Structure probing data (2A3 and DMS) for a 207-nucleotide construct.
The DMS profile rests on 2,443 reads.
Conditions: 150 mM KOAc, 10 mM MgCl2 and 150 mM bicine (pH 8.5), 24 C.
2A3 adducts were read by reverse transcription with SuperScript II with manganese.

RNA sequence: GGGAACGACUCGAGUAGAGUCGAAAACUGCAGGUCAACGGUCCGUCUUCAGAUCAGCUAUUGCAGAAGAAAGGUCAGCCAAGCGCUCUGGGCCUGGACGACUGUAUAUAGGAGCUUCUGAUUUCAACCAGAAGCUAACUCUCUCCGAAACAAUGAGUAAUAGGCAUAUCUUCGGAUAUGCCUAUUAAAAAGAAACAACAACAACAAC
Reactivity to 2A3 in 0.01 (KOAc 150mM, MgCl2 10mM, bicine 150mM(pH8.5), 24C), signal-to-noise 2, nucleotides 027 to 156: c020u030g000c020a010g030g060u050c030a020a070c100g070g020u020c000c010g010u000c000u060u050c010a020g020a140u010c020a030g000c050u120a090u210u190g040c040a020g020a080a010g070a020a110a010g090g000u080c080a010g010c010c030a170a050g000c020g020c050u060c100u130g050g030g020c000c010u030g040g030a010c020g000a020c020u010g070u030a090u000a000u030a180g160g000a010g030c000u020u030c000u030g050a180u190u190u140c060a040a020c020c020a000g010a000a000g000c000u000a020a000c000u010c000u010c020u000c030c020g080a140a020a020c110a030a060u100g000a000g040
Reactivity to DMS in 0.01 (KOAc 150mM, MgCl2 10mM, bicine 150mM(pH8.5), 24C), signal-to-noise 2, nucleotides 027 to 156: c030u010g040c010a090g050g000u010c030a070a100c040g010g070u000c010c000g000u010c080u020u000c090a040g000a030u000c040a280g000c030u000a060u000u020g020c050a100g020a130a140g000a140a160a150g010g000u000c010a050g000c020c040a050a070g040c090g020c050u000c140u000g000g020g020c020c020u010g010g000a050c040g020a070c000u000g010u000a070u010a100u000a090g010g010a080g000c000u000u010c000u000g000a030u000u020u000c190a050a050c040c000a010g000a030a040g020c010u000a000a070c070u000c060u000c030u000c040c010g010a170a160a140c070a070a140u010g000a170g000